Source: RMDB library TTRDEL, as collected in RNAgym. Structure probing data (DMS and 2A3) for a 177-nucleotide construct.
[RMDB]
RNA sequence: GGGAACGACUCGAGUAGAGUCGAAAAGAUAUGGAUCGUGAACUACGCUUAAAUGCUCGAAGAACUCGGAAACGAGGGAGAGCUAUAAGCGCACGAUCCUAAGUCAAAACCUAGCUUCGGCUAGGAAGAUGUUACCAAACUUCGGUUUGGUAACAUCAAAAGAAACAACAACAACAAC
Reactivity to DMS in 0.01 (KOAc 150mM, MgCl2 10mM, bicine 150mM(pH8.5), 24C), signal-to-noise 2, nucleotides 027 to 126: g000a050u020a300u020g030g020a000u010c000g010u000g000a170a070c110u060a300c050g050c000u000u000a010a080a030u020g030c000u000c000g010a160a190g000a120a160c000u000c000g000g020a120a040a150c010g020a000g010g000g000a100g000a010g010c000u000a300u010a010a000g000c010g030c000a010c000g000a000u000c000c000u000a020a070g000u000c010a170a020a100a090c000c000u000a000g000c010u010u000c240g050g010c000u000a000g000g020a010a020
Reactivity to 2A3 in 0.01 (KOAc 150mM, MgCl2 10mM, bicine 150mM(pH8.5), 24C), signal-to-noise 3, nucleotides 027 to 126: g020a010u040a030u100g000g010a000u020c010g030u010g000a130a170c120u180a070c300g010c010u010u020a100a140a060u300g000c010u010c020g270a300a100g050a130a040c010u000c000g000g020a070a030a020c000g000a000g000g000g020a050g000a000g000c010u010a030u010a060a010g030c000g000c000a000c000g000a010u000c000c010u000a030a000g010u010c000a000a020a090a200c000c000u000a000g020c000u030u090c300g130g000c010u000a000g000g010a000a020
Source information: The 2A3 profile rests on 5,088 reads. The RNA was probed in 150 mM KOAc, 10 mM MgCl2 and 150 mM bicine (pH 8.5) at 24 C.